[RMDB]
RNA sequence: GGGAACGACUCGAGUAGAGUCGAAAAUGCUCGUGACGAUUUUUGGAGCGGCUAUCGCCAGGAAGCGAUAUGCUGCGUUGAUGAUCUCUCCUCCUGCGAAACGCAACCCUCCAUUGAGUCGGAAUUCUACUUCAAACGUGUUCGCACGUUUGAAGUAAAAAGAAACAACAACAACAAC
Reactivity to DMS in 0.01 (KOAc 150mM, MgCl2 10mM, bicine 150mM(pH8.5), 24C), signal-to-noise 2, nucleotides 027 to 126: u000g010c030u000c030g010u000g000a100c080g000a070u000u000u000u000u030g000g010a220g010c030g010g000c010u000a030u000c010g010c010c110a160g020g010a180a100g010c020g000a020u000a000u010g030c000u010g020c020g020u000u000g000a060u010g020a040u000c030u010c030u000c030c010u000c030c000u000g010c060g010a090a070a050c090g000c070a070a130c040c020c010u000c020c030a080u000u010g000a050g000u000c040g000g020a110a130u000u000c040
Reactivity to 2A3 in 0.01 (KOAc 150mM, MgCl2 10mM, bicine 150mM(pH8.5), 24C), signal-to-noise 1, nucleotides 027 to 126: u040g020c000u000c040g120u130g090a050c040g040a110u020u090u070u110u080g060g030a060g000c000g000g010c010u050a020u060c000g010c030c060a140g200g190a170a010g010c020g010a010u030a030u280g000c000u020g040c000g020u050u130g070a080u080g040a030u020c060u000c000u010c070c000u000c000c000u080g010c030g030a090a030a030c040g000c030a000a090c000c010c000u070c000c010a050u010u080g040a030g000u040c010g040g010a000a090u070u020c010

This 177-nucleotide RNA was probed chemically with DMS and 2A3. DMS adducts were read by reverse transcription with MarathonRT. The DMS profile rests on 2,671 reads. For 2A3 the reverse transcriptase was SuperScript II with manganese. Conditions: 150 mM KOAc, 10 mM MgCl2 and 150 mM bicine (pH 8.5), 24 C.